[RMDB]
The record gives the reactivity of an RNA of 207 nucleotides to 2A3.
For 2A3, 1,647 sequencing reads were counted.
Values cover nucleotides 27 to 156.
The reactions ran in a buffer of 150 mM KOAc, 10 mM MgCl2 and 150 mM bicine (pH 8.5), at 24 C.
Values are in units of 0.01, from 0 to 300, in steps of 10.
Source: RMDB library PDB130, as collected in RNAgym.

RNA sequence: GGGAACGACUCGAGUAGAGUCGAAAAGAAGCGUGUUACCGUUUCGGUAUCUCAGCCUUCUCGCAAUCGUAAGAACUACAAGGUCCAGGUUAAGAUCCAGAACCCGACCGCUUGCACUGCAAACGGUUCUUGUGACCCAUCCGUUACUCGCCAGGCAGUCAACACUAAACUUCGGUUUAGUGUUGACAAAAGAAACAACAACAACAAC
Reactivity to 2A3 in 0.01 (KOAc 150mM, MgCl2 10mM, bicine 150mM(pH8.5), 24C), signal-to-noise 3, nucleotides 027 to 156: g030a000a000g000c020g010u040g020u050u040a040c050c000g040u050u100u160c070g060g000u030a070u010c050u020c010a040g060c030c000u030u030c010u000c030g020c060a100a160u100c050g040u080a130a000g030a080a050c020u060a050c110a050a090g040g000u010c060c050a000g050g010u120u120a120a040g040a150u050c060c030a030g030a070a050c000c000c020g020a010c020c020g000c010u020u070g010c110a150c300u190g000c020a020a050a050c010g010g000u030u040c000u040u080g030u040g040a030c000c010c010a020u040c020c000g030u040u050a030c010u020c010g070c040c010a030g050g090c040a040